Structure probing data (2A3 and DMS) for a 177-nucleotide construct. The DMS profile rests on 2,033 reads. The RNA was probed in 150 mM KOAc, 10 mM MgCl2 and 150 mM bicine (pH 8.5) at 24 C. DMS adducts were read by reverse transcription with MarathonRT.
RNA sequence: GGGAACGACUCGAGUAGAGUCGAAAAGACGAACGAAAACACAAAUGUUCCACGGUGCAGAAGGGUCCCUCACAUGAGGAUCACCCAUGUAACUCGGAGAGGAUAUGCUUUUGGGAAAAAGAGAGAACGACAUAGAUUCUUUCGAGAAUCUAUGUCGAAAAGAAACAACAACAACAAC
Reactivity to 2A3 in 0.01 (KOAc 150mM, MgCl2 10mM, bicine 150mM(pH8.5), 24C), signal-to-noise 3, nucleotides 027 to 126: g060a010c080g040a060a030c030g010a010a000a090a020c090a010c040a030a180a120u130g040u060u000c020c010a030c010g030g030u020g000c020a010g050a270a150g060g010g000u000c030c000c000u000c000a180c040a200u290g010a000g000g000a020u120c040a010c050c000c000a020u030g020u030a120a100c020u020c100g030g020a050g010a030g060g030a030u030a020u150g020c030u100u000u060u050g070g030g000a100a080a010a050a000g060a010g010a000g040a030a020
Reactivity to DMS in 0.01 (KOAc 150mM, MgCl2 10mM, bicine 150mM(pH8.5), 24C), signal-to-noise 3, nucleotides 027 to 126: g010a090c060g000a100a120c060g010a060a040a080a080c060a030c120a070a090a110u020g000u000u000c020c020a100c100g000g000u000g030c030a070g000a080a130g030g000g000u000c130c000c000u000c030a160c200a130u030g010a010g020g000a030u000c140a050c020c010c010a080u010g010u010a020a060c070u000c070g000g000a080g010a060g020g020a080u010a020u000g000c050u000u000u010u010g000g000g000a050a030a030a060a090g010a120g000a070g000a080a130